[RMDB]
RNA sequence: GGGAACGACUCGAGUAGAGUCGAAAAACAAAGAGAUCGAAAGAGCAAUGUGUAACUCAUCAUCCUAGCGAAUGGUUGGGCUCGAAAGAUCGAGUGUUUCCAUCACAUCCCGGACGCUAGAAAAAAACAACGACUAAUAGUUCGCUAUUAGUCGUUGAAAAGAAACAACAACAACAAC
Reactivity to DMS in 0.01 (KOAc 150mM, MgCl2 10mM, bicine 150mM(pH8.5), 24C), signal-to-noise 4, nucleotides 027 to 126: a060c100a070a090a110g000a150g010a060u000c040g010a070a080a090g020a030g010c030a060a060u000g030u010g010u000a070a080c050u000c050a080u010c100a070u010c060c000u000a020g010c020g020a140a090u010g010g010u000u000g000g000g010c010u000c000g020a060a100a130g010a090u000c010g010a030g020u010g000u000u000u000c030c010a040u000c130a060c140a100u000c050c000c010g000g010a270c030g010c010u010a020g010a000a010a030a060a090a060a100
Reactivity to 2A3 in 0.01 (KOAc 150mM, MgCl2 10mM, bicine 150mM(pH8.5), 24C), signal-to-noise 4, nucleotides 027 to 126: a000c050a010a110a020g100a000g010a070u070c050g080a090a070a060g030a010g030c000a030a070u120g030u020g030u080a060a030c020u020c050a070u030c000a020u010c040c020u010a000g010c020g030a060a020u030g030g020u020u060g060g010g000c000u020c000g070a130a160a090g170a190u090c020g000a010g010u040g300u040u060u000c020c010a030u060c030a020c020a080u070c020c010c010g030g010a010c020g000c030u010a010g000a070a020a020a000a010a000a010